[RMDB]
RNA sequence: GGGAACGACUCGAGUAGAGUCGAAAAACGUCACGGCAUAUACGUAUGCCGUGACGAGCAUAAUGAUGAUGCAAAAUUUGUUCCGAUUAUUCAUGAAUGGAAUACCAACCUCCUACUCAUUCUGAAAGGUAUACAGCCGCUUCGGCGGCUGUAUACCAAAAGAAACAACAACAACAAC
Reactivity to 2A3 in 0.01 (KOAc 150mM, MgCl2 10mM, bicine 150mM(pH8.5), 24C), signal-to-noise 1, nucleotides 027 to 126: a010c000g010u000c000a020c000g020g000c000a000u000a000u000a000c180g000u000a000u000g000c000c000g000u000g000a000c000g000a000g000c020a030u180a150a080u230g120a030u130g000a000u000g020c000a010a100a100a050u060u290u110g070u000u000c000c000g100a230u050u050a080u150u250c210a060u160g180a130a000u040g030g010a190a000u070a220c000c000a000a200c060c000u000c000c000u000a070c000u000c000a070u070u070c070u000g180a260a190a150

The record gives the reactivity of an RNA of 177 nucleotides to 2A3.
2A3 adducts were read by reverse transcription with SuperScript II with manganese.
The RNA was probed in 150 mM KOAc, 10 mM MgCl2 and 150 mM bicine (pH 8.5) at 24 C.
Values cover nucleotides 27 to 126.
2A3 is a SHAPE reagent: it acylates the 2'-hydroxyl of flexible nucleotides of all four kinds.
It was measured as part of the RMDB library RFM100.